[RMDB]
RNA sequence: GGGAACGACUCGAGUAGAGUCGAAAAUUUUUGGGGUUUGUGACAGGGGGACAAGGUCUCGUUCUGUCACCCAGGCUGGAAUGUAGUGGGACAGUCAUGACUCACUGCAGUCUCAAACUCCUGGGCUCAAGCAGUUCUCCUGCCUUAGCCUCCCAAACGAGUGAUUUAGUUUCGACUAAAUCACUCGAAAAGAAACAACAACAACAAC
Reactivity to 2A3 in 0.01 (KOAc 150mM, MgCl2 10mM, bicine 150mM(pH8.5), 24C), signal-to-noise 2, nucleotides 027 to 156: u130u210u060u070u010g020g020g000g020u040u040u070g050u040g010a040c040a040g040g000g000g000g000a000c040a090a070g110g030u020c030u030c110g100u210u090c000u060g020u040c030a040c000c000c010a020g030g020c080u090g020g000a060a130u030g010u020a010g020u000g000g030g020a030c040a050g070u140c060a190u130g050a030c020u000c020a010c010u010g000c000a000g000u020c020u000c000a120a100a080c010u010c000c000u000g000g040g000c010u020c060a000a020g010c010a000g040u100u070c040u020c080c010u010g000c000c030u010u030a030g000c000c010u020c000c000c020a040a070a020
The record gives the reactivity of an RNA of 207 nucleotides to 2A3. For 2A3 the reverse transcriptase was SuperScript II with manganese. It was measured as part of the RMDB library OK3TST. For 2A3, 1,103 sequencing reads were counted.